[RMDB]
This 177-nucleotide RNA was probed chemically with DMS and 2A3. The RNA was probed in 150 mM KOAc, 10 mM MgCl2 and 150 mM bicine (pH 8.5) at 24 C. For DMS, 1,313 sequencing reads were counted. DMS adducts were read by reverse transcription with MarathonRT.
RNA sequence: GGGAACGACUCGAGUAGAGUCGAAAAGAACCGAGAACGGUAAGACGCGCUAUGGCAAAAGCAGCAAUAGAUCAUACGCCGCAAGUGGCAAGACGGAGAGCGCGCAAAGCGGUAUGUAAGAGAAGAACAGCGAUUAGGUGUUCGCACCUAAUCGCUGAAAAGAAACAACAACAACAAC
Reactivity to DMS in 0.01 (KOAc 150mM, MgCl2 10mM, bicine 150mM(pH8.5), 24C), signal-to-noise 1, nucleotides 027 to 126: g000a160a050c000c000g000a140g000a020a000c050g000g000u010a070a050g000a180c150g010c120g020c020u000a010u010g040g130c070a040a070a040a090g010c090a080g020c030a090a130u030a030g000a140u000c080a000u040a040c130g050c030c040g020c070a000a190g070u030g000g000c030a020a020g080a070c160g000g000a060g000a070g000c000g000c040g000c020a000a000a010g020c130g000g000u000a060u050g010u020a040a010g000a010g000a140a010g070a130a220
Reactivity to 2A3 in 0.01 (KOAc 150mM, MgCl2 10mM, bicine 150mM(pH8.5), 24C), signal-to-noise 1, nucleotides 027 to 126: g020a010a000c030c030g000a020g060a200a040c070g040g050u090a030a030g060a050c030g090c000g020c000u000a040u050g060g000c000a010a130a000a000g000c040a000g000c000a080a080u000a100g060a030u050c020a010u030a090c020g000c010c000g000c120a180a000g020u030g160g000c050a000a000g050a010c030g030g060a080g010a000g030c000g010c020g000c000a000a060a000g040c020g020g000u000a100u100g040u060a150a010g000a010g020a040a200g010a030a030